[RMDB]
RNA sequence: GGGAACGACUCGAGUAGAGUCGAAAAUUCAAUAGCUUAUCCAAGACAGAUAGCUAUGUAUUUAACGCGCGAGCUUACUGAUUUAUCCCUUCCUAAAAUAGGUGAAGAGUUUGGGGGUAGAGACCAUACAACAGUAAUUCAUGCUCAUGACAAAGUAUCACCGUAUGCUAUUCGUAGCAUACGGUGAAAAAGAAACAACAACAACAAC
Reactivity to DMS in 0.01 (KOAc 150mM, MgCl2 10mM, bicine 150mM(pH8.5), 24C), signal-to-noise 2, nucleotides 027 to 156: u010u010c020a110a060u000a040g010c000u020u000a030u000c010c020a120a210g020a210c280a070g010a050u000a030g010c010u000a000u010g000u010a030u000u010u000a110a080c120g030c020g030c090g030a070g020c040u010u010a040c060u040g010a230u000u000u000a050u000c020c010c000u000u030c000c000u010a080a100a050a180u020a120g010g020u000g010a150a140g010a130g010u000u000u000g010g020g010g000g010u000a040g010a070g000a090c110c090a110u000a080c070a040a140c030a040g010u000a010a080u000u000c150a050u020g000c020u000c030a060u000g000a150c050a070a060a070g020u010a160
Reactivity to 2A3 in 0.01 (KOAc 150mM, MgCl2 10mM, bicine 150mM(pH8.5), 24C), signal-to-noise 3, nucleotides 027 to 156: u060u030c060a040a040u000a010g010c010u190u170a010u000c010c030a180a000g180a170c070a040g010a030u010a010g000c000u010a010u020g020u010a090u020u100u120a150a040c050g000c020g000c010g040a000g000c000u050u050a020c040u030g090a130u020u030u060a020u020c020c000c000u000u080c000c020u070a130a130a070a050u130a070g040g020u120g070a120a050g070a070g100u120u210u230g010g000g000g000g000u010a010g030a020g020a090c040c030a100u120a070c090a120a040c000a050g000u040a030a050u080u120c040a030u170g000c000u030c020a050u100g010a030c020a030a130a000g000u020a070